[RMDB]
An RNA of 207 nucleotides, treated with DMS and 2A3 and read out base by base. For DMS, 3,618 sequencing reads were counted. It was measured as part of the RMDB library RSTRND. The reactions ran in a buffer of 150 mM KOAc, 10 mM MgCl2 and 150 mM bicine (pH 8.5), at 24 C. For DMS the reverse transcriptase was MarathonRT. For 2A3 the reverse transcriptase was SuperScript II with manganese.

RNA sequence: GGGAACGACUCGAGUAGAGUCGAAAAUAGCUGCCUAAUAAGCGCUUAACGUAGAUCCUCCCAGGAUCGUCCAUGUUCUGGAUCUGGGUCCUAAAUUUAGUGGACUUACGCUCAAAGCUUCCACCUGGAGUUGCGAGAAGAGACUAAUCAGGUUAGUGGUACCUAUAUUCUUCGGAAUAUAGGUACCAAAAGAAACAACAACAACAAC
Reactivity to DMS in 0.01 (KOAc 150mM, MgCl2 10mM, bicine 150mM(pH8.5), 24C), signal-to-noise 2, nucleotides 027 to 156: u000a020g030c000u010g050c030c010u000a180a120u000a100a080g000c000g000c020u000u000a040a100c050g000u000a090g000a030u010c000c010u030c030c000c030a070g000g000a010u000c050g000u000c060c050a100u010g010u000u000c080u000g000g000a030u010c010u000g030g040g030u020c000c020u000a060a060a190u010u000u000a080g090u010g010g010a050c030u000u010a050c010g000c000u000c050a070a240a110g010c030u010u000c030c020a050c050c010u000g010g010a110g030u000u000g020c300g000a150g030a090a070g010a180g000a090c120u000a060a080u010c030a080g010g010u000u000a110g020u000
Reactivity to 2A3 in 0.01 (KOAc 150mM, MgCl2 10mM, bicine 150mM(pH8.5), 24C), signal-to-noise 7, nucleotides 027 to 156: u140a010g010c110u140g020c040c010u110a120a060u250a200a010g000c000g000c040u070u050a100a020c090g120u070a040g010a090u030c000c010u000c010c020c010a000g010g000a000u010c020g000u010c000c000a010u020g000u030u010c010u010g080g010a160u040c100u130g010g000g040u100c050c090u190a180a240a230u240u300u210a040g010u000g000g000a000c000u010u090a010c030g000c000u000c000a010a020a000g000c000u010u010c000c010a000c000c000u000g000g000a010g010u040u010g010c010g020a000g010a010a000g020a010g020a020c190u170a040a040u040c010a010g000g050u020u070a110g070u070